[RMDB]
RNA sequence: GGGAACGACUCGAGUAGAGUCGAAAACUCGACGGUGUAGCUGGAGGAUAUAGCUAACUUCGGGCUAUAAGUUACCACUGGGCACGUAGGGAUGCAAAUAGUUCCUUGCAAACCCUUAACUACAAUGGCAUUAUGCGGUAUUCGUACCGCAUAAUGCAAAAGAAACAACAACAACAAC
Reactivity to DMS in 0.01 (KOAc 150mM, MgCl2 10mM, bicine 150mM(pH8.5), 24C), signal-to-noise 2, nucleotides 027 to 126: c010u000c030g010a050c110g020g060u010g000u000a030g010c050u020g000g010a060g000g020a280u000a050u000a010g010c070u000a050a150c160u020u000c220g030g010g000c000u000a000u000a050a030g030u000u000a060c130c090a110c090u000g040g010g030c020a040c300g000u000a080g010g010g040a300u000g010c050a010a040a100u030a090g000u000u000c070c050u000u000g000c000a060a160a120c020c010c010u000u010a070a030c160u020a070c150a070a120u000g000
Reactivity to 2A3 in 0.01 (KOAc 150mM, MgCl2 10mM, bicine 150mM(pH8.5), 24C), signal-to-noise 3, nucleotides 027 to 126: c010u020c010g020a060c060g000g000u080g010u000a000g000c000u020g080g020a040g020g060a070u040a040u030a220g010c030u050a050a100c010u130u080c090g060g010g030c000u030a030u010a100a020g040u020u030a060c000c050a020c110u030g010g010g000c040a000c150g020u010a010g020g000g000a040u060g040c020a000a040a040u060a100g100u120u100c010c000u010u020g050c020a110a120a300c000c010c000u070u130a080a050c060u150a090c040a160a150u190g090